The data come from the RNA Mapping Database (RMDB), library TTRDES. This 177-nucleotide RNA was probed chemically with DMS and 2A3. Values cover nucleotides 27 to 126. High 2A3 reactivity points to a flexible backbone, as in loops and unpaired stretches. 2A3 adducts were read by reverse transcription with SuperScript II with manganese. For DMS, 9,345 sequencing reads were counted. For 2A3, 26,986 sequencing reads were counted.

[RMDB]
RNA sequence: GGGAACGACUCGAGUAGAGUCGAAAAGAUAUGGAUCAUUGAACGCGAGGAUCAGGUCAAUCGGAAACGAUUGCCUGGGAGCGUCAAUGAUCCUAAGUCAAAACGGGUGUUGUUCGCAACACCCGAAGACACCAAAAUAGUUCGCUAUUUUGGUGUCAAAAGAAACAACAACAACAAC
Reactivity to DMS in 0.01 (KOAc 150mM, MgCl2 10mM, bicine 150mM(pH8.5), 24C), signal-to-noise 3, nucleotides 027 to 126: g010a000u000a030u010g000g000a010u000c000a010u000u000g000a050a020c000g050c000g000a100g020g000a010u010c010a010g000g010u020c050a010a010u000c000g030g000a010a010a030c000g010a020u000u000g000c000c000u000g000g000g010a010g020c010g030u000c000a010a010u000g010a010u000c000c000u000a000a060g000u000c000a100a060a160a250c030g010g020g010u000g010u010u000g000u000u020c280g010c000a020a010c000a000c000c000c000g010a010a040
Reactivity to 2A3 in 0.01 (KOAc 150mM, MgCl2 10mM, bicine 150mM(pH8.5), 24C), signal-to-noise 3, nucleotides 027 to 126: g010a000u020a000u050g000g000a000u000c000a010u000u030g060a260a030c000g030c030g080a290g080g020a030u000c010a010g000g050u260c050a020a010u010c000g000g000a000a000a000c000g010a000u000u000g000c000c010u010g000g000g000a030g000c010g000u000c000a000a000u000g000a000u000c000c000u000a000a000g000u000c010a000a010a110a160c020g000g000g020u000g000u010u010g030u070u110c300g010c150a000a000c000a000c020c000c000g000a000a010